RNA sequence: GGGAACGACUCGAGUAGAGUCGAAAACAUUAAUAAAAUGUGUGGUUCGGGCAUGAAGGCUGUGAUGCUUGCGCAUGAUUUAAUUAAGGCAGGUACAGCUAAUGUAAUUUUGGCUAGCGGUAUGGAAUCAGUGGCUCAUAUUCGUAUGAGCCACUGAAAAAGAAACAACAACAACAAC
Reactivity to DMS in 0.01 (KOAc 150mM, MgCl2 10mM, bicine 150mM(pH8.5), 24C), signal-to-noise 1, nucleotides 027 to 126: c040a020u000u000a010a200u000a130a050a050a080u020g010u010g040u000g020g000u020u000c080g020g010g000c020a020u000g010a120a190g010g030c000u000g000u000g010a080u010g000c020u000u000g020c070g020c160a050u010g020a080u000u000u010a060a040u010u000a100a090g000g010c030a030g020g020u010a030c070a000g020c030u020a030a070u000g010u030a030a150u010u000u010u000g030g000c000u000a080g000c060g010g010u000a030u010g000g010a100a100
Notes: Structure probing data (DMS) for a 177-nucleotide construct. The DMS profile rests on 881 reads. Source: RMDB library OK2TST, as collected in RNAgym. Values cover nucleotides 27 to 126.